[RMDB]
RNA sequence: GGGAACGACUCGAGUAGAGUCGAAAAUUGGAAAUUGAUGGGAUGACUUUGACCUUAAAUGGUUGAAUGAGUGAGAUCUUUUGGACAUGUUCCGCACGGAACAGGAAGGAAAAGGCUAUAACAGAUCGUAGAAAUUAGACUUCGGUCUAAUUUCUACAAAAGAAACAACAACAACAAC
Reactivity to 2A3 in 0.01 (KOAc 150mM, MgCl2 10mM, bicine 150mM(pH8.5), 24C), signal-to-noise 1, nucleotides 027 to 126: u070u080g010g010a050a040a000u060u080g020a030u070g050g080g050a040u040g000a030c060u010u000u000g000a000c000c030u100u010a110a190a230u120g000g000u010u000g020a030a030u020g000a020g050u010g030a130g050a080u070c000u050u040u040u110g040g060a000c040a070u050g000u040u030c020c030g060c020a100c200g020g000a000a000c000a010g070g040a010a070g020g040a010a040a000a000g050g010c020u000a050u080a270a020c070a030g030a070u150c080
Reactivity to DMS in 0.01 (KOAc 150mM, MgCl2 10mM, bicine 150mM(pH8.5), 24C), signal-to-noise 2, nucleotides 027 to 126: u010u010g030g010a060a060a080u000u010g020a070u000g020g000g020a080u010g000a260c160u000u000u000g000a040c020c000u000u000a040a070a070u010g000g000u000u000g000a030a010u010g010a170g020u000g020a150g020a050u000c010u000u000u000u000g020g030a170c020a100u000g010u000u000c020c000g000c280a090c250g000g010a040a000c010a060g010g000a080a110g010g000a020a030a040a080g000g010c060u000a070u000a050a050c100a070g000a100u000c120
Source: RMDB library RFMREP, as collected in RNAgym. This 177-nucleotide RNA was probed chemically with 2A3 and DMS. The DMS profile rests on 1,162 reads.